Source: RMDB library OK2TRN, as collected in RNAgym. Structure probing data (DMS and 2A3) for a 177-nucleotide construct. 2A3 adducts were read by reverse transcription with SuperScript II with manganese. DMS adducts were read by reverse transcription with MarathonRT. Values are in units of 0.01, from 0 to 300, in steps of 10.
RNA sequence: GGGAACGACUCGAGUAGAGUCGAAAAACGAUCCGUACUCGGCCCGUACCGUCGCGUACACGGAUCAGCGCGAGUACGGCCACUGCAGGCCCGUGAUCGUACGUACGGCCAUCAUGACGGCCCAUGGGGCGCCUUGAAGGUUCGCCUUCAAGGCGCCAAAAGAAACAACAACAACAAC
Reactivity to DMS in 0.01 (KOAc 150mM, MgCl2 10mM, bicine 150mM(pH8.5), 24C), signal-to-noise 1, nucleotides 027 to 126: a040c160g000a160u000c000c000g000u000a000c040u030c010g000g000c080c040c070g000u020a050c020c060g000u000c100g010c080g000u010a060c190a070c040g010g020a090u000c150a130g000c110g040c000g010a090g000u000a000c010g010g010c030c070a100c100u010g000c190a090g010g000c010c050c080g030u000g000a070u000c100g000u000a110c140g010u000a050c090g010g010c070c020a090u020c060a010u000g000a110c170g000g000c020c040c050a100u010g000g030
Reactivity to 2A3 in 0.01 (KOAc 150mM, MgCl2 10mM, bicine 150mM(pH8.5), 24C), signal-to-noise 1, nucleotides 027 to 126: a000c040g000a080u020c000c000g020u000a010c000u000c020g090g020c090c000c000g030u000a110c060c000g250u120c060g000c060g070u120a060c040a050c020g030g030a070u010c030a060g010c300g000c000g000a000g000u010a000c000g030g020c010c000a100c080u190g020c130a020g000g030c000c000c030g010u060g000a000u040c040g000u040a050c100g080u070a050c040g050g000c030c030a080u110c020a060u050g120a060c070g000g030c000c080c000a110u150g000g120